RNA sequence: GGGAACGACUCGAGUAGAGUCGAAAAUUUGUCAAGUGUCACUGCCUCCAUAUGUGCCAUGCAUAGCUGGGUUCACUAGAUCCAAUCAAAUGAGAUGGUUCCGAGACAUAGCAGUGUUCAUGCAUACAUUCUGUUACCUUGAACCACAAGCAAUAAGAGCAUGACUGAAUUUCGAUUCAGUCAUGCUAAAAGAAACAACAACAACAAC
Reactivity to 2A3 in 0.01 (KOAc 150mM, MgCl2 10mM, bicine 150mM(pH8.5), 24C), signal-to-noise 3, nucleotides 027 to 156: u090u050u090g070u080c050a110a090g030u010g030u030c030a010c060u000g010c030c000u090c040c030a130u080a070u140g060u010g030c030c010a060u040g000c050a080u030a060g040c020u040g020g000g000u020u000c020a010c080u010a020g010a060u010c000c020a020a040u060c050a020a120a150u140g050a180g010a040u010g020g000u000u000c050c030g080a070g000a030c100a080u190a000g070c030a000g010u040g030u110u050c060a140u050g090c010a040u100a180c010a040u130u070c030u120g030u040u000a010c000c010u020u010g040a000a030c000c010a020c050a060a080g140c030a010a070u170a150a040g050
Reactivity to DMS in 0.01 (KOAc 150mM, MgCl2 10mM, bicine 150mM(pH8.5), 24C), signal-to-noise 1, nucleotides 027 to 156: u000u000u010g030u010c070a190a090g000u010g060u020c040a120c080u020g000c040c000u000c020c040a120u020a070u030g080u010g050c050c100a130u000g050c020a060u010a030g030c030u000g020g010g060u010u010c050a140c070u000a070g000a060u010c000c040a020a140u000c050a080a060a140u010g000a150g000a140u000g040g000u000u000c040c030g010a100g010a090c090a120u010a070g030c010a010g030u010g000u000u000c050a050u000g010c060a180u000a080c050a100u020u000c040u010g000u000u000a050c060c060u000u000g000a030a070c010c000a040c030a070a160g010c060a050a090u010a130a080g000